Structure probing data (2A3) for a 207-nucleotide construct.

RNA sequence: GGGAACGACUCGAGUAGAGUCGAAAAGUAUGGAUGCCACCGUGACGGCUCAAUCACACAAGUGCCAACGAUAACGCGGCGCUCGCUAUUGCUGCGUAACUGACGGCCUGACGGUCUGACGUUACAAAAAACGAAAAGUGGUUCGCCACUUUUCGAAUCCAAACAUGUCGUUCGCGACAUGUUUGGAAAAAGAAACAACAACAACAAC
Reactivity to 2A3 in 0.01 (KOAc 150mM, MgCl2 10mM, bicine 150mM(pH8.5), 24C), signal-to-noise 1, nucleotides 027 to 156: g130u110a050u190g030g010a050u070g050c070c000a100c020c020g030u020g010a020c100g010g010c090u080c070a090a060u080c000a000c010a010c020a230a030g070u020g030c010c050a090a060c030g140a150u070a170a010c060g010c010g040g030c000g050c020u030c080g100c040u120a110u110u240g010c050u010g000c050g030u010a010a030c030u020g020a010c010g070g040c080c000u230g060a030c030g040g180u020c050u000g040a010c000g000u010u000a000c000a000a000a000a160a000a000c000g000a000a010a000a000g000u000g060g000u030u030c080g080c030c000a000c010u000u000u000u000c000g030a000a010
The reactions ran in a buffer of 150 mM KOAc, 10 mM MgCl2 and 150 mM bicine (pH 8.5), at 24 C. Source: RMDB library M2RFPK, as collected in RNAgym.